[RMDB]
Chemical mapping of a 177-nucleotide RNA with DMS and 2A3. It was measured as part of the RMDB library 15KREP. Values cover nucleotides 27 to 126.
RNA sequence: GGGAACGACUCGAGUAGAGUCGAAAAGUGACGCAAUUCAAGUAGCCAAGUGCUAUGGGGAGUCUGUGUUAGUUAAUGCUGCUAACACACAUCUUAAGCAUGGCGGUGGUAUCGCUGGUGCUAUUAACCGUAACUUUUACUUCGGUAAAAGUUACGGAAAAGAAACAACAACAACAAC
Reactivity to DMS in 0.01 (KOAc 150mM, MgCl2 10mM, bicine 150mM(pH8.5), 24C), signal-to-noise 1, nucleotides 027 to 126: g010u030g000a090c020g020c120a080a140u010u030c060a070a200g030u000a140g020c020c040a090a140g020u000g010c030u000a020u030g000g010g000g000a030g020u010c100u000g000u000g010u000u000a000g020u010u010a100a130u010g040c170u000g010c000u000a000a000c000a020c010a030c090a080u010c020u000u000a060a020g000c020a030u010g000g010c010g000g030u030g010g000u020a110u010c070g000c000u000g020g010u000g010c000u000a050u000u010a120a130
Reactivity to 2A3 in 0.01 (KOAc 150mM, MgCl2 10mM, bicine 150mM(pH8.5), 24C), signal-to-noise 2, nucleotides 027 to 126: g080u010g040a000c030g000c080a030a050u150u090c030a050a100g010u000a020g020c000c010a250a050g110u070g120c010u000a060u080g000g040g020g010a030g040u000c030u080g000u000g000u000u000a010g000u040u130a130a040u300g110c070u100g010c000u020a020a000c010a000c000a000c000a050u030c050u100u080a040a020g010c010a010u020g060g000c020g020g000u020g030g070u120a060u180c020g040c000u060g070g000u030g030c010u000a050u150u110a090a040